[RMDB]
RNA sequence: GGGAACGACUCGAGUAGAGUCGAAAAGAUAUGGACCACCACUGCUUUUGACGGCUGAUACAUCGGAAACGAUGUACAGCCGAUAAGCAGGGUGGUCCUAAGUCAAAGGGUUCGUUCGCGAACCCAACCACUAAACGAAGUUCGCUUCGUUUAGUGGAAAAGAAACAACAACAACAAC
Reactivity to 2A3 in 0.01 (KOAc 150mM, MgCl2 10mM, bicine 150mM(pH8.5), 24C), signal-to-noise 6, nucleotides 027 to 126: g010a000u060a030u130g010g010a000c000c010a010c010c010a300c240u010g040c030u150u150u130u270g300a220c110g000g020c000u000g020a250u000a020c010a000u010c000g010g030a060a040a030c020g010a000u000g000u000a000c000a000g000c010c000g000a000u020a000a000g000c000a000g010g000g000u000g010g010u000c000c000u000a010a000g000u000c010a000a070a070g010g000g010u010u010c010g010u050u110c300g000c000g170a000a000c000c000c000a010a010
Reactivity to DMS in 0.01 (KOAc 150mM, MgCl2 10mM, bicine 150mM(pH8.5), 24C), signal-to-noise 6, nucleotides 027 to 126: g010a060u000a300u010g000g000a030c000c000a000c000c000a200c020u000g010c000u000u000u000u000g010a270c150g000g010c000u000g000a280u000a010c000a000u000c000g010g000a070a050a190c010g000a030u000g000u000a000c000a010g010c000c000g010a000u010a000a000g020c000a010g010g010g030u000g000g010u000c000c000u000a000a080g010u000c040a110a110a150g010g010g010u000u000c000g030u000u010c270g020c010g010a010a010c000c000c000a020a030
This 177-nucleotide RNA was probed chemically with 2A3 and DMS. It was measured as part of the RMDB library TTRDES. For 2A3 the reverse transcriptase was SuperScript II with manganese. 2A3 is a SHAPE reagent: it acylates the 2'-hydroxyl of flexible nucleotides of all four kinds. For DMS, 10,062 sequencing reads were counted. For DMS the reverse transcriptase was MarathonRT. Conditions: 150 mM KOAc, 10 mM MgCl2 and 150 mM bicine (pH 8.5), 24 C.